RNA sequence: GGGAACGACUCGAGUAGAGUCGAAAAGGGGUCUUGCCUGGAGAUCGGAGUACGACGCUUGGAUUUAUGGAGCUGAAGCCUCCACGGCUCCAUUGUCAGCGUUAAAACGAUCGAUGAAAGGCAAGACGGAGGCACCCAAAACCAGAGUUCGCUCUGGGUUAACAAGUUCGUUCGCGAACUUGUUAACAAAAGAAACAACAACAACAAC
Reactivity to 2A3 in 0.01 (KOAc 150mM, MgCl2 10mM, bicine 150mM(pH8.5), 24C), signal-to-noise 2, nucleotides 027 to 156: g110g020g050g010u000c000u010u000g000c000c010u000g030g010a010g000a000u010c000g010g010a080g140u100a070c160g000a010c000g070c050u180u300g200g010a070u140u180u150a030u070g010g000a000g000c000u030g030a090a010g020c000c000u000c000c000a000c000g000g000c010u010c000c000a000u000u010g020u010c110a040g020c000g000u000u060a030a020a000a000c020g010a020u010c000g050a060u010g010a000a000a000g000g000c000a000a010g000a000c000g000g000a000g000g030c020a040c010c010c010a030a100a000a030c000c010a010g010a000g020u110u140c210g030c100u000c000u010g000g010